The data come from the RNA Mapping Database (RMDB), library TTRDES. The record gives the reactivity of an RNA of 177 nucleotides to DMS. The reactions ran in a buffer of 150 mM KOAc, 10 mM MgCl2 and 150 mM bicine (pH 8.5), at 24 C. Values cover nucleotides 27 to 126.

RNA sequence: GGGAACGACUCGAGUAGAGUCGAAAAGAUAUGGAGCGUGUGUAGACAUGCGUAUUGGGUCGGAAACGACCCAUUACGCAACAGCUACCACGCUCCUAAGUCAAACACCCCAGUUCGCUGGGGUGAAGGACACGUAGUUGUUCGCAACUACGUGUCCAAAAGAAACAACAACAACAAC
Reactivity to DMS in 0.01 (KOAc 150mM, MgCl2 10mM, bicine 150mM(pH8.5), 24C), signal-to-noise 1, nucleotides 027 to 126: g000a010u000a200u000g040g000a040g010c000g010u000g000u020g040u000a000g010a020c220a290u020g020c000g000u010a020u000u020g000g040g030u000c000g040g000a070a010a200c030g020a020c000c020c000a010u000u000a000c030g010c000a050a030c290a180g000c000u000a010c010c000a010c000g000c000u020c000c000u000a000a030g000u000c020a260a210a300c040a000c000c000c000c000a040g080u000u000c160g030c010u000g000g020g000g050u000g010a010a060